[RMDB]
RNA sequence: GGGAACGACUCGAGUAGAGUCGAAAAUUCCACCCACCGGCCGCUGAUAUGUCUGAUAUUCUUGGGUUAUCUGAUAAUGAUUGUUGUAACUCAAGUAUUAGACGUAUCGACGGCCGGCUGGGUUGGAGACGUUUAAUCCAUUCGUGGAUUAAACGUCAAAAGAAACAACAACAACAAC
Reactivity to 2A3 in 0.01 (KOAc 150mM, MgCl2 10mM, bicine 150mM(pH8.5), 24C), signal-to-noise 6, nucleotides 027 to 126: u040u000c000c000a010c000c000c000a000c000c000g000g000c000c010g000c010u010g000a000u000a000u010g010u000c000u000g020a010u000a030u170u060c010u000u000g020g000g010u020u010a030u050c070u060g160a100u130a280a150u190g240a240u180u210g110u150u080g020u040a000a000c000u010c000a000a000g000u000a000u000u000a000g000a000c010g000u000a000u000c000g010a000c000g000g000c000c000g000g000c000u010g010g000g000u000u090g010g010a020
Reactivity to DMS in 0.01 (KOAc 150mM, MgCl2 10mM, bicine 150mM(pH8.5), 24C), signal-to-noise 1, nucleotides 027 to 126: u010u010c000c010a040c010c000c010a080c000c010g000g040c000c010g010c020u000g020a010u000a000u010g020u000c000u000g010a000u000a000u060u040c000u010u000g000g000g000u000u000a010u000c080u050g040a060u010a160a170u070g040a150u030u040g030u050u000g000u000a000a020c000u000c000a020a000g020u020a040u000u000a000g020a020c030g000u000a000u000c000g000a070c010g000g000c000c000g050g000c010u000g010g030g030u000u010g000g000a090
An RNA of 177 nucleotides, treated with 2A3 and DMS and read out base by base. For 2A3 the reverse transcriptase was SuperScript II with manganese. Reactivities are given for positions 27 through 126. The reactions ran in a buffer of 150 mM KOAc, 10 mM MgCl2 and 150 mM bicine (pH 8.5), at 24 C. Source: RMDB libraries RFM100 and RFMREP, as collected in RNAgym.